Source information
This 207-nucleotide RNA was probed chemically with DMS. Reactivities are given for positions 27 through 156. For DMS, 2,929 sequencing reads were counted. For DMS the reverse transcriptase was MarathonRT.
[RMDB]
RNA sequence: GGGAACGACUCGAGUAGAGUCGAAAACAGUACGCUGGCAACACAAUCAAAUUGCGGGAAACUCCUUAGAGCUCAAGCUACCGCUGCUGCCCAGAGAUGGGUUGUGGCACCAGGUUAACGACCUCGGGUAUGGUAACAACGCUUGAGAUUGGACAAUUGAUUGAAUAGUGUUCGCACUAUUCAAUCAAAAAGAAACAACAACAACAAC
Reactivity to DMS in 0.01 (KOAc 150mM, MgCl2 10mM, bicine 150mM(pH8.5), 24C), signal-to-noise 2, nucleotides 027 to 156: c060a090g020u030a050c060g020c070u000g020g030c010a070a090c040a070c020a070a090u010c080a070a090a300u000u000g000c010g030g010g020a170a130a040c070u010c000c000u000u000a150g000a130g000c020u020c010a010a070g010c020u000a030c020c020g000c010u000g030c040u000g010c000c000c000a070g010a250g010a280u000g000g000g030u000u000g000u000g040g000c020a030c000c010a020g020g000u000u000a150a100c180g000a230c000c000u000c130g050g000g010u000a000u000g030g000u010a140a060c110a030a080c060g000c000u000u000g010a070g000a140u000u010g000g020a150c060a100a150u010